[RMDB]
RNA sequence: GGGAACGACUCGAGUAGAGUCGAAAACAUGGUUGCUUUAUCAGUCACUCUUAGGCCAUUAACAAAGUGUGGCUCGAUUUGCUGGUUUGAUAAUGCUUCAUUAAUAAAUGGGCCACCGCCAUGAACGGGCCUUGUUUCCUUUCGAGGAAACAAGGCCAAAAGAAACAACAACAACAAC
Reactivity to 2A3 in 0.01 (KOAc 150mM, MgCl2 10mM, bicine 150mM(pH8.5), 24C), signal-to-noise 1, nucleotides 027 to 126: c000a050u160g250g000u060u120g110c000u250u000u140a000u000c080a000g020u030c000a030c000u050c000u000u000a000g020g000c000c000a000u300u250a210a000c050a080a100a000g110u210g000u000g300g000c000u000c000g200a150u000u050u000g000c000u150g060g170u080u000u210g130a100u000a000a180u080g080c030u000u150c000a020u000u300a170a110u000a070a030a070u100g000g000g000c050c050a000c020c030g000c000c000a110u110g100a070a000c250g000